[RMDB]
RNA sequence: GGGAACGACUCGAGUAGAGUCGAAAACAUGUGGUUACCGGUCAUCUACGCCAGGGCAAUGAGCCACAGGAUUGGGCAACACUGGCAAAACUGGAAGGCACGUUGAUUAUCCUGAUGGGCAUGACGCUCGUAUACCUGGUUUCGACCAGGUAUACGAAAAAGAAACAACAACAACAAC
Reactivity to DMS in 0.01 (KOAc 150mM, MgCl2 10mM, bicine 150mM(pH8.5), 24C), signal-to-noise 4, nucleotides 027 to 126: c080a060u000g030u000g010g000u000u000a120c040c030g000g010u000c090a110u010c130u000a120c160g010c040c010a030g010g010g010c090a050a090u010g010a180g010c010c020a080c070a100g000g010a130u020u010g010g010g000c030a040a070c110a080c050u000g000g000c030a050a040a080a070c050u000g010g010a120a070g010g010c030a040c050g020u000u000g010a100u000u000a100u000c010c010u000g010a090u000g010g010g000c060a100u000g000a080c130g000c070
Reactivity to 2A3 in 0.01 (KOAc 150mM, MgCl2 10mM, bicine 150mM(pH8.5), 24C), signal-to-noise 3, nucleotides 027 to 126: c030a060u080g030u030g060g290u070u050a060c020c000g010g010u030c030a110u000c090u060a030c070g000c020c020a030g000g050g000c050a070a160u160g050a060g020c020c010a130c030a050g060g080a160u170u140g060g070g000c020a080a020c040a030c060u010g010g000c000a010a020a010a100c040u060g000g040a050a010g090g010c000a000c070g020u020u050g040a100u050u140a040u070c000c000u040g040a110u110g010g020g000c030a010u090g040a040c070g000c060
This 177-nucleotide RNA was probed chemically with DMS and 2A3.
The DMS profile rests on 4,606 reads.
The 2A3 profile rests on 3,769 reads.